[RMDB]
RNA sequence: GGGAACGACUCGAGUAGAGUCGAAAAGAUAUGGAGUCCGGGAGCUCGAUAAGCGUGGAUCGGAAACGAUCCAACGCUUUUGACGAGCGAACGGACUCCUAAGUCAAAACAGCUCUUCGGAGCUGAACUUACCUCUACGCUUCGGCGUAGAGGUAAGAAAAGAAACAACAACAACAAC
Reactivity to DMS in 0.01 (KOAc 150mM, MgCl2 10mM, bicine 150mM(pH8.5), 24C), signal-to-noise 1, nucleotides 027 to 126: g030a030u010a300u000g070g000a030g000u000c000c000g030g000g000a300g010c000u010c000g060a140u000a000a000g000c000g010u000g000g010a010u000c000g000g000a240a200a210c000g020a000u000c000c060a010a100c000g000c000u000u000u000u000g000a300c290g020a060g000c000g070a300a300c030g000g000a000c000u000c000c000u000a000a030g000u040c000a130a060a090a250c000a000g030c000u000c000u000u060c150g030g000a000g030c010u000g010a040a120
Chemical mapping of a 177-nucleotide RNA with DMS. The RNA was probed in 150 mM KOAc, 10 mM MgCl2 and 150 mM bicine (pH 8.5) at 24 C. Source: RMDB library TTRDES, as collected in RNAgym. The DMS profile rests on 578 reads. Reactivities are given for positions 27 through 126.